This 177-nucleotide RNA was probed chemically with 2A3. The RNA was probed in 150 mM KOAc, 10 mM MgCl2 and 150 mM bicine (pH 8.5) at 24 C. It was measured as part of the RMDB library OK1LIB.
RNA sequence: GGGAACGACUCGAGUAGAGUCGAAAAGUUCUGCCGCUUCAGCUCGCUGUUCUUCUGGCGAAUCUCGCGGCUGCGGUGCGUCGUUGAGGCGGAGGCACUGUCGCUCGGGUUCAUGCUGGCCGUGGAGACUACUCGCGCGAUUCGUCGCGCGAGUAGUAAAAGAAACAACAACAACAAC
Reactivity to 2A3 in 0.01 (KOAc 150mM, MgCl2 10mM, bicine 150mM(pH8.5), 24C), signal-to-noise 2, nucleotides 027 to 126: g020u010u000c000u080g000c050c040g090c030u050u110c010a020g000c050u100c000g060c010u040g200u090u080c100u240u040c070u140g080g010c130g000a010a020u000c100u030c190g000c050g060g000c010u000g000c020g050g000u000g020c060g080u060c010g000u020u060g020a010g130g130c020g020g000a070g060g000c040a000c050u080g010u060c040g050c040u010c030g010g000g000u050u090c050a060u190g050c020u020g040g090c020c020g070u040g010g020a030g000